[RMDB]
RNA sequence: GGGAACGACUCGAGUAGAGUCGAAAAGAUAUGGAUCCGGUAAUACUCUUUGUUCUAUGAAGUCGGAAACGAUGGAGAAUUUGGAGUGCCAGGAUCCUAAGUCGACGGAUCUCGUUCGCGAGAUCAAGGUCACGUAUACGUUCGCGUAUACGUGACCAAAAGAAACAACAACAACAAC
Reactivity to DMS in 0.01 (KOAc 150mM, MgCl2 10mM, bicine 150mM(pH8.5), 24C), signal-to-noise 1, nucleotides 027 to 126: g000a060u000a300u000g000g000a010u010c000c000g000g000u000a160a050u010a230c000u000c000u000u000u000g010u000u010c000u010a200u110g010a150a100g000u000c000g030g000a160a150a120c010g000a000u010g000g030a010g000a000a050u000u000u010g000g010a010g040u010g000c000c000a080g030g000a010u000c000c000u000a010a090g010u030c010g040a140c170g010g000a010u000c010u000c010g010u000u010c300g020c010g000a000g000a010u000c000a040a030
Reactivity to 2A3 in 0.01 (KOAc 150mM, MgCl2 10mM, bicine 150mM(pH8.5), 24C), signal-to-noise 1, nucleotides 027 to 126: g020a020u050a020u140g030g010a000u030c040c060g020g040u140a140a120u170a190c000u000c000u000u050u060g070u050u000c110u030a300u300g030a020a000g000u000c030g030g080a130a110a000c010g020a000u060g010g030a000g010a010a040u040u080u040g000g000a000g000u030g090c050c040a090g050g000a000u000c000c000u000a030a040g030u000c000g030a060c080g140g000a000u000c000u000c020g040u000u120c300g000c010g120a000g020a020u030c020a000a030